[RMDB]
About this RNA: This 177-nucleotide RNA was probed chemically with DMS and 2A3. The reactions ran in a buffer of 150 mM KOAc, 10 mM MgCl2 and 150 mM bicine (pH 8.5), at 24 C. Values cover nucleotides 27 to 126. It was measured as part of the RMDB library OK2TRN.
RNA sequence: GGGAACGACUCGAGUAGAGUCGAAAAGGGAAACAUGAUUCGAUAGGUAUCGAUGCAGUUGCAAUGUGUGUUAAUGAUAUUUUAACGACAGGUGCAGAACCAUUGUAUUUUUUAGAUUACAUCGCUACUACCAACUUAUAUUCGUAUAAGUUGGUAGAAAAGAAACAACAACAACAAC
Reactivity to DMS in 0.01 (KOAc 150mM, MgCl2 10mM, bicine 150mM(pH8.5), 24C), signal-to-noise 9, nucleotides 027 to 126: g010g010g010a120a080a090c090a070u010g010a110u000u000c030g010a070u000a070g010g010u000a070u010c040g020a050u000g000c070a110g010u010u000g010c020a060a060u000g010u000g010u010g020u000u000a020a040u000g010a160u010a080u010u000u000u000a020a030c020g010a040c050a020g000g020u000g010c030a050g010a110a120c210c030a060u000u000g010u000a000u000u000u000u010u000u010a130g010a060u000u000a060c060a060u000c090g010c120u000a140
Reactivity to 2A3 in 0.01 (KOAc 150mM, MgCl2 10mM, bicine 150mM(pH8.5), 24C), signal-to-noise 9, nucleotides 027 to 126: g050g010g040a060a060a030c060a070u120g020a110u110u070c020g020a030u060a080g100g080u100a030u120c030g010a020u060g000c040a030g050u120u030g000c010a020a030u020g020u010g020u010g010u060u020a040a020u060g150a090u050a180u250u100u000u020a020a010c010g020a010c020a020g270g010u030g010c010a010g030a080a020c030c010a020u020u050g030u030a080u040u070u020u010u030u060a080g010a100u050u070a040c020a040u050c050g020c080u030a060